[RMDB]
RNA sequence: GGGAACGACUCGAGUAGAGUCGAAAAAAACUUAACAACUCGAGACGGUAAGAAGGAAACUAAGGAGUAGAAGAAGAAGGGUGAAAAGAUGAAAGAAAUUUCACCACAUGCAGGGAAAGGGUAACUCGAAUUAGCAAUACUUCGGUAUUGCUAAUUCAAAAGAAACAACAACAACAAC
Reactivity to 2A3 in 0.01 (KOAc 150mM, MgCl2 10mM, bicine 150mM(pH8.5), 24C), signal-to-noise 1, nucleotides 027 to 126: a010a010a010c040u040u000a080a060c080a030a010c010u000c020g000a020g020a000c020g030g050u050a050a010g030a060a010g060g010a020a060a010c040u090a100a070g010g010a040g060u090a030g020a170a000g010a070a000g030a060a020g060g020g010u010g010a000a000a000a000g090a030u090g070a070a030a050g080a020a060a010u010u000u010c000a040c060c030a000c020a040u140g000c020a020g000g000g070a090a010a000g040g000g000u020a010a010c020u040c100
Reactivity to DMS in 0.01 (KOAc 150mM, MgCl2 10mM, bicine 150mM(pH8.5), 24C), signal-to-noise 2, nucleotides 027 to 126: a050a070a040c050u020u010a130a110c140a120a050c040u020c010g000a050g000a170c040g020g000u000a060a070g000a030a020g000g010a070a070a030c100u000a050a030g010g000a090g000u010a060g010a070a040g010a090a070g010a070a040g010g000g040u000g000a040a000a040a060g040a070u010g000a020a040a080g000a060a070a130u000u000u000c010a010c000c000a080c110a020u010g010c090a090g000g000g020a030a060a070g000g010g000u010a040a020c130u020c180